[RMDB]
RNA sequence: GGGAACGACUCGAGUAGAGUCGAAAAAUGCGCUUCCAAUAGUAGAAGGACGUUAAGCAUUUAUCAUUGAACUAUAAUUGUUCAUUGAAGUCAUUGAUGCAAACUCCUUGGUCACACACACAUACGGGAAGAGGAACAAGUUCGCUUGUUCCUCUUCAAAAGAAACAACAACAACAAC
Reactivity to DMS in 0.01 (KOAc 150mM, MgCl2 10mM, bicine 150mM(pH8.5), 24C), signal-to-noise 3, nucleotides 027 to 126: a090u000g020c040g010c030u000u000c020c030a140a090u010a070g010u000a140g020a080a040g000g010a020c190g010u000u000a110a180g030c000a020u000u010u000a080u000c000a020u000u000g000a000a000c020u000a140u020a080a190u010u000g020u000u000c010a000u000u000g000a020a100g010u010c270a180u000u010g020a030u000g000c000a140a040a040c030u000c000c000u000u010g000g000u040c080a000c060a040c090a030c050a050c080a070u000a070c220g020g010
Reactivity to 2A3 in 0.01 (KOAc 150mM, MgCl2 10mM, bicine 150mM(pH8.5), 24C), signal-to-noise 3, nucleotides 027 to 126: a000u070g020c040g020c070u060u030c000c000a070a140u170a090g100u050a040g080a110a000g070g000a020c130g030u050u060a140a040g000c010a020u010u090u080a090u040c010a010u010u010g010a020a000c020u000a020u140a300a220u270u100g000u000u000c000a010u020u030g040a050a000g080u120c070a060u050u220g020a020u030g000c000a010a050a050c010u000c000c000u020u030g080g000u060c030a020c000a010c000a000c000a000c010a110u090a160c020g160g000
Notes: Structure probing data (DMS and 2A3) for a 177-nucleotide construct. Values cover nucleotides 27 to 126. The 2A3 profile rests on 1,990 reads. The RNA was probed in 150 mM KOAc, 10 mM MgCl2 and 150 mM bicine (pH 8.5) at 24 C.